[RMDB]
Chemical mapping of a 177-nucleotide RNA with DMS and 2A3. It was measured as part of the RMDB library OK2TRN. Reactivities are given for positions 27 through 126. The reactions ran in a buffer of 150 mM KOAc, 10 mM MgCl2 and 150 mM bicine (pH 8.5), at 24 C. The 2A3 profile rests on 5,184 reads.
RNA sequence: GGGAACGACUCGAGUAGAGUCGAAAACAACAGCAUGCAUUUAGCUACAUACUGAAUUCUGGCCAUAGACUCUUUGCAGUCUUAGCACCUAAGGCACAGCUAGGUGGGCAUAGAGACCUACUGGUGCAGAACCUAAGAGUUUCGACUCUUAGGUUCUAAAAGAAACAACAACAACAAC
Reactivity to DMS in 0.01 (KOAc 150mM, MgCl2 10mM, bicine 150mM(pH8.5), 24C), signal-to-noise 5, nucleotides 027 to 126: c070a090a250c050a020g000c050a030u000g010c020a040u000u000u000a100g010c040u010a050c050a040u000a070c030u000g000a100a120u010u000c050u010g010g000c010c030a110u000a030g000a060c010u000c010u000u000u010g030c060a060g000u000c060u010u010a080g000c030a080c030c030u010a050a060g000g000c090a070c120a060g010c090u000a030g010g020u000g010g010g020c040a060u000a040g010a080g000a100c050c010u000a020c160u000g010g010u000g000c080
Reactivity to 2A3 in 0.01 (KOAc 150mM, MgCl2 10mM, bicine 150mM(pH8.5), 24C), signal-to-noise 4, nucleotides 027 to 126: c020a000a020c010a020g030c030a030u080g030c030a050u090u090u180a080g030c050u070a030c020a050u130a060c030u060g080a160a100u080u060c030u060g060g000c020c000a030u030a050g020a080c000u010c040u090u110u150g000c050a040g050u010c020u030u040a010g000c010a010c020c020u050a080a130g050g000c090a030c030a130g030c020u020a010g050g020u010g050g070g000c000a010u030a050g080a010g020a050c010c000u020a040c080u050g010g020u030g050c030